[RMDB]
RNA sequence: GGGAACGACUCGAGUAGAGUCGAAAACGAGAUGCAUUGACAUGAUCGCAUGUACUCUAUUAAUGCGUCUUAGUAUGCUCAUAGAACGCUAUAUUGUGAGUGACAAUAGUACAUGCGAUGAGCAUAAGGUAGUUGAUCAUUUCGAUGGUCGACUACCAAAAGAAACAACAACAACAAC
Reactivity to 2A3 in 0.01 (KOAc 150mM, MgCl2 10mM, bicine 150mM(pH8.5), 24C), signal-to-noise 9, nucleotides 027 to 126: c060g010a010g020a060u070g030c060a110u090u160g090a130c060a090u230g030a040u080c000g000c010a000u010g000u010a010c020u060c070u140a120u160u210a100a030u060g000c000g010u000c000u010u010a030g010u020a040u080g010c000u000c010a010u030a040g080a100a040c050g020c100u070a060u040a090u260u110g040u040g130a150g100u120g060a030c030a040a060u050a090g010u010a000c000a010u010g000c000g000a000u010g000a000g000c010a030u020a110a030
Reactivity to DMS in 0.01 (KOAc 150mM, MgCl2 10mM, bicine 150mM(pH8.5), 24C), signal-to-noise 9, nucleotides 027 to 126: c050g000a040g000a030u000g010c030a060u010u010g010a140c270a110u030g010a040u000c020g010c010a010u000g010u000a010c010u000c180u010a080u020u020a040a040u000g010c010g010u000c010u010u000a080g020u010a030u010g000c000u000c010a050u000a030g010a070a090c140g010c110u030a100u010a060u010u010g010u000g010a130g020u040g010a040c060a040a030u010a010g020u010a020c010a000u000g000c000g010a000u010g010a060g010c070a030u010a070a140

Structure probing data (2A3 and DMS) for a 177-nucleotide construct.
Conditions: 150 mM KOAc, 10 mM MgCl2 and 150 mM bicine (pH 8.5), 24 C.
For 2A3 the reverse transcriptase was SuperScript II with manganese.